The record gives the reactivity of an RNA of 177 nucleotides to DMS and 2A3. The 2A3 profile rests on 17,911 reads. Conditions: 150 mM KOAc, 10 mM MgCl2 and 150 mM bicine (pH 8.5), 24 C. Source: RMDB library OK1LIB, as collected in RNAgym.
[RMDB]
RNA sequence: GGGAACGACUCGAGUAGAGUCGAAAAGUCCUAGCGAAAAGCUAGGACAAGUGCAUCGCUAGACAGAUCGUCGAAAAGACGAUAGAAAGAUGCACAUGUCUAGCAAGUCGAGGAGAACUCGACAAAAAUUAUCAGUACCUUUCGAGGUACUGAUAAUAAAAGAAACAACAACAACAAC
Reactivity to DMS in 0.01 (KOAc 150mM, MgCl2 10mM, bicine 150mM(pH8.5), 24C), signal-to-noise 7, nucleotides 027 to 126: g010u000c000c010u010a030g000c080g020a080a070a070a150g000c000u000a010g010g000a000c010a010a030g000u010g010c020a020u000c030g030c120u010a050g000a100c160a090g010a030u000c000g010u000c000g000a100a050a100a110g010a000c000g000a020u000a030g000a120a120a100g000a040u020g000c010a020c020a030u000g000u010c020u010a040g010c070a170a130g000u000c010g000a010g000g000a220g000a100a180c000u000c000g010a010c010a010a030a050a110
Reactivity to 2A3 in 0.01 (KOAc 150mM, MgCl2 10mM, bicine 150mM(pH8.5), 24C), signal-to-noise 9, nucleotides 027 to 126: g000u000c000c000u000a000g020c010g080a200a150a080a020g000c000u000a000g000g010a000c000a000a000g010u020g010c030a050u060c110g010c050u050a020g020a070c030a030g130a060u010c000g010u000c000g010a040a190a030a100g000a000c010g010a000u020a010g060a000a090a020g090a050u150g010c000a000c000a020u040g010u000c020u020a020g040c050a110a050g010u000c010g000a010g010g050a150g030a150a180c010u000c000g000a000c000a000a040a000a000